[RMDB]
RNA sequence: GGGAACGACUCGAGUAGAGUCGAAAAUGUGGCCGCGCAUCACCCAUGGCAUUCUCUAUCUUAAUUUUAUGGCUGCCUCAUCUUUUUGGAAUUCGCCUUCUUUUUGUGUGUUGGGUGAUAAGUCAAGCACACUUCUUUUCUUCGGAAAAGAAGUGUGAAAAGAAACAACAACAACAAC
Reactivity to DMS in 0.01 (KOAc 150mM, MgCl2 10mM, bicine 150mM(pH8.5), 24C), signal-to-noise 2, nucleotides 027 to 126: u000g020u000g000g020c010c050g030c110g040c140a090u000c020a050c040c020c020a070u000g000g000c030a050u000u000c020u000c060u000a060u020c090u020u010a070a070u010u000u010u010a110u010g010g010c030u000g000c060c030u000c050a030u000c020u000u010u000u010u000g000g020a110a120u010u000c130g000c050c040u000u000c050u010u000u000u010u010g020u000g020u010g010u010u010g000g010g020u010g010a050u000a070a100g000u000c070a040a150g000